[RMDB]
About this RNA
This 177-nucleotide RNA was probed chemically with 2A3 and DMS. Reactivities are given for positions 27 through 126. Source: RMDB libraries RFM100 and RFMREP, as collected in RNAgym. High 2A3 reactivity points to a flexible backbone, as in loops and unpaired stretches. The reactions ran in a buffer of 150 mM KOAc, 10 mM MgCl2 and 150 mM bicine (pH 8.5), at 24 C.
RNA sequence: GGGAACGACUCGAGUAGAGUCGAAAACCUCACCUCCAGUAGGCACCUUGGUCUCUUUGGGCUAAUCUCUGGCUCCUCUGCACUAACUCUUGCUCUCACCCAGCUAAUCCCUGCCUCGCCCUGGCUGGGUUUAAACAUGAUUCGUCAUGUUUAAACCAAAAGAAACAACAACAACAAC
Reactivity to 2A3 in 0.01 (KOAc 150mM, MgCl2 10mM, bicine 150mM(pH8.5), 24C), signal-to-noise 9, nucleotides 027 to 126: c000c000u020c030a050c000c010u040c010c010a050g050u080a080g080g030c030a060c010c020u040u080g050g020u030c010u010c000u100u080u090g030g010g000c020u040a050a090u090c040u010c020u060g040g000c010u020c010c000u020c020u030g030c030a020c050u060a110a020c010u040c010u050u080g020c000u010c000u010c030a050c000c010c010a010g010c010u020a040a070u050c010c000c010u020g020c010c000u020c030g020c010c000c000u010g030g010c020u040g020
Reactivity to DMS in 0.01 (KOAc 150mM, MgCl2 10mM, bicine 150mM(pH8.5), 24C), signal-to-noise 9, nucleotides 027 to 126: c010c000u010c100a130c060c020u000c020c040a080g010u020a080g010g010c050a060c050c040u000u010g000g000u010c020u010c050u000u020u010g010g010g010c040u000a070a110u010c070u000c060u010g010g000c040u000c030c020u010c030u000g010c050a070c060u010a080a100c060u010c030u010u010g000c030u000c020u010c060a090c030c010c030a060g010c040u010a080a130u010c020c020c010u000g000c040c020u000c050g000c030c010c020u000g000g000c050u010g000